[RMDB]
RNA sequence: GGGAACGACUCGAGUAGAGUCGAAAACAAGCUGAGAAGGGGAGAAUCGGCCCAAGGUGAGAUCCACAGAAAGGCCAGGGCCAAGAUGCGGCCAGCACCUCAGGCUGGUGGUGGUCUUACGUUGACCACUCUCUGUAGCGUUCGCGCUACAGAGAGUAAAAGAAACAACAACAACAAC
Reactivity to 2A3 in 0.01 (KOAc 150mM, MgCl2 10mM, bicine 150mM(pH8.5), 24C), signal-to-noise 2, nucleotides 027 to 126: c010a020a020g080c060u060g030a010g040a150a090g050g010g050g000a030g030a100a070u080c030g020g000c070c030c010a070a040g040g000u020g000a130g000a070u070c020c010a060c040a000g180a090a050a020g050g000c020c010a010g000g040g060c010c000a010a020g120a080u120g020c020g030g010c000c000a010g040c030a060c030c000u030c030a020g110g000c040u000g040g000u060g060g020u020g010g000u000c020u010u070a160c130g060u040u050g020a030c000c000
Reactivity to DMS in 0.01 (KOAc 150mM, MgCl2 10mM, bicine 150mM(pH8.5), 24C), signal-to-noise 3, nucleotides 027 to 126: c050a110a130g040c060u000g000a090g020a110a090g010g010g000g040a120g000a050a070u000c100g000g000c030c020c040a090a060g010g000u010g010a050g010a150u020c050c030a060c090a090g020a100a100a120g000g030c010c010a090g010g020g000c030c020a050a040g010a080u000g000c050g000g000c040c050a070g000c030a050c070c070u010c090a090g000g000c050u000g000g020u000g000g040u000g000g000u000c000u000u000a030c150g000u010u010g000a110c030c060

Structure probing data (2A3 and DMS) for a 177-nucleotide construct. Reactivities are given for positions 27 through 126. 2A3 adducts were read by reverse transcription with SuperScript II with manganese. It was measured as part of the RMDB library OK2TST.